[RMDB]
RNA sequence: GGGAACGACUCGAGUAGAGUCGAAAAAGCAUCUUUGAGCUCUUCUAACCGUGCAUUUGAUAAAGCUUUUCCUCCAUUUCUUAUAACGAAUUGCAUUGCAUGAGGAGCGUUUUGAAAAGCUUGUCUAGAUUUACUCCUACUUCGGUAGGAGUAAAUCAAAAGAAACAACAACAACAAC
Reactivity to 2A3 in 0.01 (KOAc 150mM, MgCl2 10mM, bicine 150mM(pH8.5), 24C), signal-to-noise 8, nucleotides 027 to 126: a000g070c050a090u070c080u130u110u150g090a020g010c000u000c010u030u000c020u030a100a100c040c010g020u010g010c010a060u030u050u090g130a160u200a150a080a050g030c040u070u050u060u020c030c030u060c030c030a100u060u130u050c070u080u210a180u070a240a040c060g020a070a050u110u080g010c020a040u020u130g010c020a010u060g020a010g020g000a010g000c020g030u080u050u050u030g060a060a050a000a010g000c020u030u010g020u050c050u080a010
Reactivity to DMS in 0.01 (KOAc 150mM, MgCl2 10mM, bicine 150mM(pH8.5), 24C), signal-to-noise 5, nucleotides 027 to 126: a020g010c010a090u010c070u000u010u010g000a110g010c000u000c010u000u000c010u000a230a200c100c090g000u000g010c010a060u000u010u000g010a090u020a030a050a060g010c110u000u010u010u010c010c010u010c050c040a110u010u000u000c030u010u020a110u030a060a130c100g000a040a010u020u010g020c010a030u000u010g020c040a120u010g000a020g000g010a010g000c080g000u000u000u020u010g010a060a030a040a090g000c010u000u000g010u000c040u020a120
Overview:
The record gives the reactivity of an RNA of 177 nucleotides to 2A3 and DMS. The RNA was probed in 150 mM KOAc, 10 mM MgCl2 and 150 mM bicine (pH 8.5) at 24 C.